[RMDB]
RNA sequence: GGGAACGACUCGAGUAGAGUCGAAAAGAUAUGGAGGCCUGACAUGCAAAUGCUCGGAAACGAGCAUAUUGCAACAGCAGGCUCCUAAGUCAAAAGAUUCUGUUUAUGUUCGCAUAAACAGAAUCAAGAUUCAAAUACUCUUCGGAGUAUUUGAAUCAAAAGAAACAACAACAACAAC
Reactivity to 2A3 in 0.01 (KOAc 150mM, MgCl2 10mM, bicine 150mM(pH8.5), 24C), signal-to-noise 1, nucleotides 027 to 126: g020a020u040a040u130g020g020a030g090g300c000c000u040g030a110c000a050u020g000c000a000a030a000u010g020c010u000c000g010g000a050a090a050c030g020a000g000c000a000u010a070u010u000g020c000a020a010c010a010g080c020a000g010g010c010u000c000c000u000a040a030g030u010c050a030a010a090a210g000a000u000u000c000u000g000u000u000u000a010u010g040u020u090c300g000c160a010u000a000a010a000c000a010g010a010a000u000c010a000a000
Reactivity to DMS in 0.01 (KOAc 150mM, MgCl2 10mM, bicine 150mM(pH8.5), 24C), signal-to-noise 2, nucleotides 027 to 126: g010a060u010a300u000g000g000a040g010g020c000c000u000g000a060c100a240u000g000c000a010a030a030u000g010c000u000c000g000g000a080a040a180c020g020a000g000c000a000u000a010u000u000g000c000a010a050c260a140g000c000a000g000g000c000u000c000c000u020a050a120g010u010c040a100a110a100a130g000a020u000u000c010u000g010u000u000u000a000u000g000u000u030c190g020c010a000u000a000a000a010c000a020g000a010a000u000c010a040a050
Description:
The record gives the reactivity of an RNA of 177 nucleotides to 2A3 and DMS. Reactivities are given for positions 27 through 126. The RNA was probed in 150 mM KOAc, 10 mM MgCl2 and 150 mM bicine (pH 8.5) at 24 C. For 2A3 the reverse transcriptase was SuperScript II with manganese.